Background: An RNA of 177 nucleotides, treated with 2A3 and DMS and read out base by base. It was measured as part of the RMDB library M2PK50. Values cover nucleotides 27 to 126. DMS adducts were read by reverse transcription with MarathonRT. For DMS, 2,096 sequencing reads were counted. The reactions ran in a buffer of 150 mM KOAc, 10 mM MgCl2 and 150 mM bicine (pH 8.5), at 24 C. For 2A3, 2,249 sequencing reads were counted.
RNA sequence: GGGAACGACUCGAGUAGAGUCGAAAAGGUCCUCGCUUCGGCGAGGACCAGAGCACCACUCCUGCGGGAGUUAAGGCCAUACGGACAGCCGGGUGCAAAGCCAAUUGUUUAAGUUCGCUUAAACAAAGGCAAUUAAUUCAUUCGUGAAUUAAUUGCCAAAAGAAACAACAACAACAAC
Reactivity to 2A3 in 0.01 (KOAc 150mM, MgCl2 10mM, bicine 150mM(pH8.5), 24C), signal-to-noise 1, nucleotides 027 to 126: g000g000u000c000c000u000c000g050c010u060u090c220g110g000c000g000a000g010g000a000c000c000a000g000a010g000c020a010c010c000a010c000u010c010c000u070g000c270g040g000g000a000g010u050u210a170a060g010g000c000c000a010u060a080c060g020g010a010c020a010g000c010c010g010g000g010u020g000c000a010a010a020g000c010c030a040a080u060u040g000u000u020u000a020a020g020u010u130c250g000c080u000u000a010a000a000c020a020a000a010
Reactivity to DMS in 0.01 (KOAc 150mM, MgCl2 10mM, bicine 150mM(pH8.5), 24C), signal-to-noise 2, nucleotides 027 to 126: g000g000u000c000c000u000c000g020c010u000u010c160g020g030c000g000a010g000g000a010c000c000a000g010a080g010c020a000c000c000a090c010u010c000c000u000g020c180g020g010g000a020g020u000u020a080a060g010g010c000c000a070u000a080c280g010g010a030c050a210g010c000c010g000g020g000u000g000c010a080a020a110g000c010c000a020a200u000u000g010u000u000u000a010a010g010u000u020c220g020c000u000u000a000a010a010c010a010a070a120